[RMDB]
RNA sequence: GGGAACGACUCGAGUAGAGUCGAAAAUUGCCAUCAUGAAUUUUACAUCAGUGCUAGCUCUUUGUUUUACGUGUUUCAUUUGGCAGGUCACAAAGGCUCUUGGCUACCACACAUACGUGCAUACACACACACACACACACACACACACACUCAUAAAAGGUAAUCAUCAUUUCGAUGAUGAUUACCUAAAAGAAACAACAACAACAAC
Reactivity to DMS in 0.01 (KOAc 150mM, MgCl2 10mM, bicine 150mM(pH8.5), 24C), signal-to-noise 1, nucleotides 027 to 156: u000u020g030c020c050a130u000c080a050u010g030a120a080u000u010u010u020a110c010a060u000c050a080g020u010g000c020u000a130g000c040u020c040u000u020u010g000u000u000u000u000a080c160g010u010g020u010u020u000c040a160u000u000u000g030g030c000a050g050g020u000c080a050c040a050a110a110g030g000c000u000c040u020u020g040g010c010u010a070c030c020a020c080a080c050a090u000a070c120g000u000g030c030a090u020a030c050a060c020a070c040a040c020a080c080a060c000a070c000a020c000a040c070a030c050a100c000a100c050a020c060a060c060u000c010a050u030a030a090a110
Reactivity to 2A3 in 0.01 (KOAc 150mM, MgCl2 10mM, bicine 150mM(pH8.5), 24C), signal-to-noise 4, nucleotides 027 to 156: u090u070g040c010c010a050u090c040a030u150g090a120a100u120u100u090u200a110c060a050u110c060a030g030u030g100c040u070a040g020c010u020c040u100u070u080g050u050u150u070u070a030c060g030u030g040u050u050u060c080a130u070u040u000g030g000c020a010g040g010u030c020a000c010a050a060a010g050g000c010u010c000u050u040g040g000c010u040a010c010c040a030c000a010c000a050u070a100c040g010u040g000c040a020u080a090c040a030c010a020c010a010c000a010c010a000c000a000c000a000c030a000c010a000c000a000c000a000c020a050c030a040c070u090c050a050u250a110a020a080
Source information
The data come from the RNA Mapping Database (RMDB), library OK3TST. Structure probing data (DMS and 2A3) for a 207-nucleotide construct. The RNA was probed in 150 mM KOAc, 10 mM MgCl2 and 150 mM bicine (pH 8.5) at 24 C. For DMS the reverse transcriptase was MarathonRT. Reactivities are given for positions 27 through 156.